[RMDB]
RNA sequence: GGGAACGACUCGAGUAGAGUCGAAAAGAUAUGGAGCAAGGGUUGCGAUGGCGCCUAGCAUCGCGAAACUACCGGUCGGAAACGACCGUGUAGGAGAUGGGUCAUCGCAACCCUUGCUCCUAAGUCAGUAUUAUUAUCCCUUCGGGGAUAAUAAUACAAAAGAAACAACAACAACAAC
Reactivity to DMS in 0.01 (KOAc 150mM, MgCl2 10mM, bicine 150mM(pH8.5), 24C), signal-to-noise 2, nucleotides 027 to 126: g030a030u000a300u010g010g000a000g010c020a020a000g000g020g020u020u010g030c000g040a000u000g000g000c000g050c190c160u010a190g000c020a040u000c070g010c170g000a210a090a240c010u000a010c000c010g010g010u020c000g000g000a100a050a160c000g030a010c000c010g000u020g020u010a000g000g000a070g000a080u020g000g000g000u000c000a020u000c000g020c000a000a010c000c000c000u000u000g010c030u000c010c000u000a010a030g000u000c040a130

Chemical mapping of a 177-nucleotide RNA with DMS.
Values are in units of 0.01, from 0 to 300, in steps of 10.
It was measured as part of the RMDB library TTRINS.
For DMS, 1,980 sequencing reads were counted.